[RMDB]
RNA sequence: GGGAACGACUCGAGUAGAGUCGAAAAGAUAUGGACGUUGCAUGACAUGCUGAGUACGUUCGGAAACGAACGUACCAGCAACAGCAUGCCAACGUCCUAAGUCAAAAGCUAUCCUUCGGGAUAGCAACUGAUCCUUAAUGUUCGCAUUAAGGAUCAGAAAAGAAACAACAACAACAAC
Reactivity to DMS in 0.01 (KOAc 150mM, MgCl2 10mM, bicine 150mM(pH8.5), 24C), signal-to-noise 7, nucleotides 027 to 126: g000a040u000a300u010g000g010a010c010g030u000u000g000c000a010u000g000a060c120a240u000g000c000u000g000a170g020u000a000c010g010u000u010c000g010g000a130a110a240c000g020a010a010c000g000u000a000c000c010a010g000c000a010a030c280a180g000c000a000u000g010c180c090a000a010c000g020u000c000c000u000a000a070g020u010c040a130a080a110a120g010c000u000a000u000c000c010u000u010c230g020g000g000a010u000a000g020c000a040a040
Reactivity to 2A3 in 0.01 (KOAc 150mM, MgCl2 10mM, bicine 150mM(pH8.5), 24C), signal-to-noise 5, nucleotides 027 to 126: g040a020u080a060u190g000g000a000c010g000u000u000g000c000a010u010g050a250c020a120u080g010c010u010g010a040g130u000a000c010g000u000u010c020g020g020a100a110a020c010g000a000a000c010g000u000a000c000c000a000g030c010a010a010c030a000g020c000a000u020g040c160c010a010a000c000g000u000c000c000u000a020a010g030u000c030a000a000a080a140g000c000u000a000u010c000c000u020u070c270g100g000g000a000u010a000g000c000a000a000